[RMDB]
RNA sequence: GGGAACGACUCGAGUAGAGUCGAAAAGAUAUGGACGGCACAGGGAGCUCGCCAUUCGGAAACGAAUGGAGGAGCGAGGAUCUGUGUCGUCCUAAGUCAAAUCACUCAAGACUUCGGUCUUGAGUGAGACAGUCUAGAGGUUCGCCUCUAGACUGUCAAAAGAAACAACAACAACAAC
Reactivity to DMS in 0.01 (KOAc 150mM, MgCl2 10mM, bicine 150mM(pH8.5), 24C), signal-to-noise 2, nucleotides 027 to 126: g000a010u000a000u010g000g000a010c000g020g000c000a010c010a010g010g010g010a010g030c000u010c010g010c000c000a020u000u000c010g010g010a000a000a030c000g010a020a000u000g000g010a060g010g010a020g020c000g010a050g020g020a010u000c010u000g010u000g020u000c010g030u000c000c000u000a000a050g000u000c010a110a110a300u000c000a010c000u000c000a010a010g000a020c000u000u020c290g040g010u000c000u000u000g000a010g010u000g010a010
Reactivity to 2A3 in 0.01 (KOAc 150mM, MgCl2 10mM, bicine 150mM(pH8.5), 24C), signal-to-noise 2, nucleotides 027 to 126: g010a000u000a010u060g000g000a010c000g000g000c010a000c000a000g030g020g020a020g020c000u000c010g030c000c000a000u000u020c000g010g000a010a000a000c010g020a010a010u030g020g030a070g280g060a010g020c010g030a130g010g000a010u000c000u000g000u000g000u000c000g010u010c000c000u000a000a000g010u000c000a000a010a040u040c000a010c000u010c000a000a000g010a010c010u080u300c300g140g000u040c000u000u000g000a000g000u000g000a010